[RMDB]
Source: RMDB library TTRDES, as collected in RNAgym. An RNA of 177 nucleotides, treated with 2A3 and DMS and read out base by base.
RNA sequence: GGGAACGACUCGAGUAGAGUCGAAAAGAUAUGGAUCAAGAUGUGCGAUAAGCUGGAUUCGGAAACGAAUCCCAGCUUUUGACGCACUACCUUGAUCCUAAGUCAAAGGAGGACUUCGGUCCUCCAACGAUACUAGGAGGUUCGCCUCCUAGUAUCGAAAAGAAACAACAACAACAAC
Reactivity to 2A3 in 0.01 (KOAc 150mM, MgCl2 10mM, bicine 150mM(pH8.5), 24C), signal-to-noise 4, nucleotides 027 to 126: g040a010u100a030u200g010g000a000u000c000a010a000g010a030u020g000u010g020c020g030a070u010a100a010g000c010u000g000g000a010u010u000c020g030g020a090a070a040c010g000a010a010u050c030c010c120a010g010c000u020u000u010u090g060a030c020g000c010a000c000u010a030c000c000u000u010g000a000u000c000c000u000a060a010g040u040c050a070a100a140g000g010a010g000g000a010c000u090u100c300g160g000u000c000c000u010c000c000a000a000
Reactivity to DMS in 0.01 (KOAc 150mM, MgCl2 10mM, bicine 150mM(pH8.5), 24C), signal-to-noise 6, nucleotides 027 to 126: g000a030u010a300u020g000g000a010u000c000a010a020g010a060u010g000u000g010c010g020a150u010a020a010g020c010u010g010g000a070u010u000c010g000g000a150a100a200c010g000a030a000u000c180c030c030a000g010c000u000u000u020u010g010a210c110g010c000a010c010u000a060c130c010u000u010g000a010u000c010c000u000a010a080g010u000c020a070a140a180g010g010a020g010g000a010c000u000u020c220g030g000u000c010c000u000c010c000a000a040